[RMDB]
RNA sequence: GGGAACGACUCGAGUAGAGUCGAAAAGAUAUGGAGUUACUUAGACAUGAUAUAACAUCGGAAACGAUGUUGUAUCAACAGCUAAUAACUCCUAAGUCAAACUGCGCAUGGUUCGCCAUGCGCAGAACCCCAAGGUUAAGUUCGCUUAACCUUGGGGAAAAGAAACAACAACAACAAC
Reactivity to 2A3 in 0.01 (KOAc 150mM, MgCl2 10mM, bicine 150mM(pH8.5), 24C), signal-to-noise 1, nucleotides 027 to 126: g000a000u010a000u050g010g000a000g020u010u020a010c100u110u000a030g010a010c060a300u300g000a010u000a000u000a000a010c010a000u000c010g000g000a050a000a000c000g010a010u000g000u000u010g000u000a000u000c000a050a030c090a010g000c000u010a000a000u010a010a010c000u040c000c000u020a010a010g010u020c030a020a070a170c010u000g000c020g000c000a000u000g000g060u060u080c100g080c180c010a000u020g000c010g000c000a000g020a000a000
Reactivity to DMS in 0.01 (KOAc 150mM, MgCl2 10mM, bicine 150mM(pH8.5), 24C), signal-to-noise 2, nucleotides 027 to 126: g010a010u000a060u000g000g000a010g000u000u000a020c300u000u000a020g020a010c050a220u020g010a010u000a010u000a020a010c000a010u010c010g030g000a000a020a000c020g010a000u010g010u000u000g000u000a000u000c000a120a050c250a230g000c000u000a000a010u000a020a000c010u010c000c000u000a020a090g000u000c020a140a100a220c030u000g000c010g000c030a000u000g010g010u000u010c300g020c010c010a010u000g010c000g010c040a000g000a030a080